[RMDB]
RNA sequence: GGGAACGACUCGAGUAGAGUCGAAAAUACUUGGGAGGCUGAGGCAGAAAUCGCUUGAACCUUGGAGGCGAAGGUUGCAGUGAGCCGAGGUCGCGCCACUACACUCCAGCCUGGGAGACAGAGGGACGCGGAUAUAUCAUUUCGAUGAUAUAUCCGCAAAAGAAACAACAACAACAAC
Reactivity to 2A3 in 0.01 (KOAc 150mM, MgCl2 10mM, bicine 150mM(pH8.5), 24C), signal-to-noise 1, nucleotides 027 to 126: u120a000c030u070u060g040g020g000a010g000g000c030u030g020a000g000g020c000a010g150a180a150a030u090c010g020c050u080u140g050a020a000c000c000u000u060g080g110a030g060g050c070g030a040a010g080g010u030u110g050c020a020g020u000g030a020g020c000c020g030a010g000g050u010c000g000c030g000c020c000a050c020u090a050c040a020c000u000c000c010a040g000c020c030u040g010g000g030a050g010a040c060a050g030a080g010g020g000a000c040
Reactivity to DMS in 0.01 (KOAc 150mM, MgCl2 10mM, bicine 150mM(pH8.5), 24C), signal-to-noise 2, nucleotides 027 to 126: u000a070c100u010u010g010g020g000a170g010g010c040u010g000a140g010g000c040a150g020a080a080a100u010c040g010c040u000u000g020a040a050c010c010u010u000g020g000a070g000g010c010g000a050a070g000g010u000u000g000c030a070g010u000g020a060g000c030c010g000a240g000g000u010c050g020c090g010c030c020a050c090u010a060c110a070c060u000c040c010a070g000c010c020u030g000g000g000a090g010a070c090a030g000a070g000g010g000a070c170